[RMDB]
RNA sequence: GGGAACGACUCGAGUAGAGUCGAAAAAUCAUACUGUAGUCUUAACCUUCAAUGAGUCAAUAUCGUUAGGCUCAUCUGACACCUGACGCACUCGUUCAGACUACAGUAUGUGUACGGUCCUUCAUUCAGGUGUCAGAUGAGCCUGAAAGAAGGACAAUACCAUUUAUGCCUUCGGGCAUAAAUGGUAAAAAGAAACAACAACAACAAC
Reactivity to 2A3 in 0.01 (KOAc 150mM, MgCl2 10mM, bicine 150mM(pH8.5), 24C), signal-to-noise 2, nucleotides 027 to 156: a000u020c010a030u000a010c000u000g010u000a000g000u020c020u000u040a060a090c010c040u120u130c100a090a200u170g040a050g100u070c070a110a080u100a120u170c130g100u120u180a020g000g000c000u000c000a030u000c010u000g000a000c010a010c000c010u050g080a090c140g070c180a060c100u250c100g030u160u080c020a000g000a000c000u000a000c010a000g000u000a000u000g000u000g000u000a050c010g060g070u060c000c030u020u170c020a130u120u000c000a000g040g000u010g010u010c000a000g000a000u000g000a010g000c030c000u000g000a000a000a010g050a010a010g090g030a000c080a000a090
This 207-nucleotide RNA was probed chemically with 2A3. For 2A3 the reverse transcriptase was SuperScript II with manganese. Values are in units of 0.01, from 0 to 300, in steps of 10.